[RMDB]
RNA sequence: GGGAACGACUCGAGUAGAGUCGAAAAAUGGAACAUGUGCCAAGAUAAACCAUAUUCUAGGCCAUAAAACAAAUCUACACAAACGUGAAAGAAGAGAACAAACACAGUUAUGGUCUCAGCACAUAAUAGAAUUCAACUAGCAAGCAAUAUCAAAAGAUCACUCGUGCUAUUUCGAUAGCACGAGUGAAAAAGAAACAACAACAACAAC
Reactivity to 2A3 in 0.01 (KOAc 150mM, MgCl2 10mM, bicine 150mM(pH8.5), 24C), signal-to-noise 2, nucleotides 027 to 156: a000u120g060g000a100a040c070a080u050g010u150g010c000c000a040a040g000a040u180a200a170a060c040c000a070u090a120u100u100c010u010a010g010g000c000c000a100u020a000a060a030a000c020a020a020a000u020c060u090a040c040a020c070a100a300a070c150g000u000g060a070a140a110g020a070a040g000a010g000a100a010c080a090a040a030c090a000c000a140g000u050u010a100u070g010g000u020c010u030c040a000g020c040a000c020a030u190a080a010u020a060g020a030a010u110u060c010a040a040c010u070a050g000c030a090a020g020c010a070a040u070a010u250c070a000a020a040a060g230a040